RNA sequence: GGGAACGACUCGAGUAGAGUCGAAAACGGCGACCACACCCUGACCGGCGAACGCGGCAUCGCCAUGCAACAUCAGCGGCACCACCGAGAACGCCCGUUGGCCGUCGCUGUCGAUGCUUCCGUGGUCCAAGAAUUAGACCUUCGGGUCUAAUUCUUGAAAAGAAACAACAACAACAAC
Reactivity to 2A3 in 0.01 (KOAc 150mM, MgCl2 10mM, bicine 150mM(pH8.5), 24C), signal-to-noise 2, nucleotides 027 to 126: c020g070g030c060g030a050c030c020a040c020a060c070c020c030u030g070a060c020c050g030g040c030g060a100a040c060g010c040g080g020c020a020u040c010g010c020c030a020u130g030c030a050a070c020a100u080c030a010g020c000g000g000c000a000c010c000a080c000c080g060a090g030a300a030c070g110c040c000c020g020u030u020g020g020c080c090g030u010c010g000c010u010g020u040c050g010a030u030g030c000u090u020c050c020g040u030g020g000u050c030
Reactivity to DMS in 0.01 (KOAc 150mM, MgCl2 10mM, bicine 150mM(pH8.5), 24C), signal-to-noise 4, nucleotides 027 to 126: c130g000g000c100g000a050c020c060a090c070a190c060c040c060u000g000a090c110c090g000g010c040g020a050a070c130g000c140g000g010c060a100u000c020g040c030c050a050u010g020c020a050a050c090a080u010c040a020g010c030g010g000c030a160c050c030a090c090c070g000a070g010a090a150c180g020c070c010c020g010u000u000g000g000c170c040g020u000c020g000c010u000g000u000c050g020a070u000g020c030u000u000c040c040g010u000g010g010u000c050
An RNA of 177 nucleotides, treated with 2A3 and DMS and read out base by base. Reactivities are given for positions 27 through 126. The 2A3 profile rests on 2,943 reads. The DMS profile rests on 3,574 reads.